[RMDB]
RNA sequence: GGGAACGACUCGAGUAGAGUCGAAAACUACGUGGUACAUGAUCACUAGUGAUCCAGCAUCAUGGGAUCUCAUGGAUCCAUGGAUCUGCAGUCAUGUACUAUAUGAUGACUAGAGCGAUCAGUACACGCAACUUUUUAGUUUCGACUAAAAAGUUGCAAAAGAAACAACAACAACAAC
Reactivity to DMS in 0.01 (KOAc 150mM, MgCl2 10mM, bicine 150mM(pH8.5), 24C), signal-to-noise 3, nucleotides 027 to 126: c020u010a110c140g040u000g000g010u000a010c010a060u000g010a010u000c060a090c100u000a070g010u000g000a020u010c010c050a050g010c220a090u000c150a090u000g010g000g000a010u000c000u010c200a160u010g020g020a040u000c010c000a120u000g000g000a020u000c030u000g000c170a150g000u010c000a030u000g020u000a030c070u010a060u000a080u000g010a070u020g010a010c040u000a050g000a040g010c160g000a070u000c020a050g010u000a040c080a070c100
Reactivity to 2A3 in 0.01 (KOAc 150mM, MgCl2 10mM, bicine 150mM(pH8.5), 24C), signal-to-noise 4, nucleotides 027 to 126: c020u090a050c040g060u040g010g010u030a050c060a140u010g020a030u070c020a010c100u040a060g100u010g070a000u010c000c010a020g060c030a080u140c000a070u190g150g000g060a070u020c040u020c060a160u230g130g010a000u000c020c000a040u020g010g030a020u020c020u050g030c060a020g020u020c010a040u060g020u130a010c010u000a000u000a010u050g040a030u060g010a030c020u050a080g010a030g190c040g040a050u030c010a030g030u020a060c050a020c100